[RMDB]
RNA sequence: GGGAACGACUCGAGUAGAGUCGAAAAGAAAAGAUGCACAAGGAGCGCGUGCAAAAUUAGAGCCAGGACGAGCACGAGGAACACGACACGAACCGGAGUCCUGGCGCGUAUCCAGUUCAAAAGAAAAGAUGGUCACUACCUUCGGGUAGUGACCAUCAAAAGAAACAACAACAACAAC
Reactivity to DMS in 0.01 (KOAc 150mM, MgCl2 10mM, bicine 150mM(pH8.5), 24C), signal-to-noise 1, nucleotides 027 to 126: g020a300a040a040a030g000a120u030g000c070a000c100a000a180g110g000a070g010c000g000c000g000u000g000c050a030a050a220a050u020u000a090g010a170g000c020c000a000g000g050a000c020g000a000g000c070a000c150g000a090g030g000a090a260c130a170c130g020a110c220a080c130g000a070a080c110c000g000g000a000g000u000c000c000u000g000g000c000g030c070g000u000a110u000c020c040a240g000u000u020c000a030a110a050a180g000a000a140a090a010
Reactivity to 2A3 in 0.01 (KOAc 150mM, MgCl2 10mM, bicine 150mM(pH8.5), 24C), signal-to-noise 1, nucleotides 027 to 126: g170a000a160a010a000g090a010u040g000c000a000c000a050a180g000g080a000g000c000g000c040g000u060g040c040a020a020a020a020u260u100a030g010a000g000c030c000a000g000g000a020c020g030a090g080c140a000c120g000a080g080g020a120a000c010a000c010g150a040c000a000c060g000a190a000c000c000g000g000a030g000u000c000c000u000g000g030c000g000c000g000u000a050u060c040c000a000g050u000u060c110a150a140a000a000g100a000a000a040a030